[RMDB]
RNA sequence: GGGAACGACUCGAGUAGAGUCGAAAACAAGGGCCGUUCGCGGCCCUUGAAAUAAAGAAAUCGUGGUACGUACGAUAACGUACAAAAACAAAUAAACAAAUAAAAGAAUGGACUUCGGUCCAUUCAACCUAAAUCCAAGUUUCGACUUGGAUUUAGGAAAAGAAACAACAACAACAAC
Reactivity to DMS in 0.01 (KOAc 150mM, MgCl2 10mM, bicine 150mM(pH8.5), 24C), signal-to-noise 1, nucleotides 027 to 126: c010a030a020g020g010g000c000c000g010u000u010c150g050c020g030g050c000c000c000u000u000g010a000a050a150u010a080a110a080g030a030a150a060u010c020g040u000g020g010u000a000c000g020u000a040c000g020a160u000a040a000c000g000u010a000c010a070a050a020a060a050c110a080a140a050u000a070a100a040c080a110a080a050u020a060a080a110a160g000a010a000u000g010g000a000c000u000u000c220g030g020u000c010c000a000u010u000c000a030a060
Reactivity to 2A3 in 0.01 (KOAc 150mM, MgCl2 10mM, bicine 150mM(pH8.5), 24C), signal-to-noise 3, nucleotides 027 to 126: c010a000a000g000g000g000c000c010g030u070u090c210g010c000g090g000c000c000c000u000u000g010a000a000a000u110a000a030a030g110a010a150a060u270c050g000u010g120g000u030a010c010g000u010a010c030g050a150u020a020a030c000g000u040a000c040a010a100a020a000a020c060a010a170a050u210a060a060a020c030a050a160a010u200a120a120a000a020g000a000a000u000g000g000a010c000u020u090c300g080g010u020c000c000a010u000u010c000a000a000